[RMDB]
RNA sequence: GGGAACGACUCGAGUAGAGUCGAAAACUGUGAUGCCCUUAGAUGCACGCGCGCUACAAUAAUAUUUCCUAGACCGAGAGGUCCGGGUAAACCGCUGAACCGCUUUCAUGCUUGGGAUUGUGAACUGCAACAAGUACUAGUUCGCUAGUACUUGUUGAAAAGAAACAACAACAACAAC
Reactivity to 2A3 in 0.01 (KOAc 150mM, MgCl2 10mM, bicine 150mM(pH8.5), 24C), signal-to-noise 2, nucleotides 027 to 126: c020u030g050u050g130a100u160g070c030c010c000u030u100a090g010a060u100g020c020a010c050g020c010g010c020g010c040u090a050c090a060a030u130a200a010u060a120u110u070u000c010c000u010a010g010a020c010c000g010a010g020a010g080g010u010c000c010g010g010g000u040a070a040a010c030c030g010c060u020g040a030a020c020c020g000c000u040u110u060c010a050u120g040c060u040u040g060g010g040a120u070u080g040u040g030a080a070c020u080g000
Reactivity to DMS in 0.01 (KOAc 150mM, MgCl2 10mM, bicine 150mM(pH8.5), 24C), signal-to-noise 6, nucleotides 027 to 126: c070u010g020u010g000a100u010g010c020c020c020u000u000a070g010a100u000g000c050a050c070g000c080g020c050g020c030u000a070c110a070a050u010a090a100u010a140u010u000u000c010c010u000a080g000a030c010c010g010a230g000a220g000g020u000c000c030g010g010g000u000a040a070a100c100c040g010c060u000g010a070a080c050c040g010c030u010u000u000c040a070u000g000c030u000u000g000g010g010a080u000u000g010u000g000a080a110c130u000g010